[RMDB]
RNA sequence: GGGAACGACUCGAGUAGAGUCGAAAAGACCGCACAGAUGAGGGUCUGGAUGAAUGCCGUAUAGAAGGAGCCGUGGAUAAAAUAUGUCGCAACCGCAAAGGCAAGCAAUGCACCGAUCAUGCUGAAACCGAUCCAUAGCUUUCGAGCUAUGGAUCGGAAAAGAAACAACAACAACAAC
Reactivity to DMS in 0.01 (KOAc 150mM, MgCl2 10mM, bicine 150mM(pH8.5), 24C), signal-to-noise 1, nucleotides 027 to 126: g010a080c000c000g090c150a110c070a120g020a080u020g050a280g010g000g020u000c000u030g000g000a150u020g050a140a010u060g000c000c020g000u110a030u030a020g020a070a060g020g000a000g000c040c080g130u050g050g020a100u050a050a100a030a040u050a050u060g060u030c100g050c020a110a160c040c030g000c090a020a100a140g000g000c050a000a060g000c110a000a080u000g030c060a090c000c030g000a050u000c030a110u010g000c020u000g000a130a030a170
Reactivity to 2A3 in 0.01 (KOAc 150mM, MgCl2 10mM, bicine 150mM(pH8.5), 24C), signal-to-noise 2, nucleotides 027 to 126: g050a010c000c000g130c020a020c000a080g060a050u030g010a120g000g100g070u000c000u010g000g030a080u010g120a090a050u050g000c000c000g000u040a080u050a170g140a130a020g060g060a000g020c040c030g020u060g020g000a010u090a210a060a040a020u270a130u060g090u050c000g000c000a000a120c010c070g000c030a110a070a000g000g000c000a000a040g050c020a000a150u030g030c040a030c010c000g000a000u020c060a060u060g070c020u070g000a100a000a000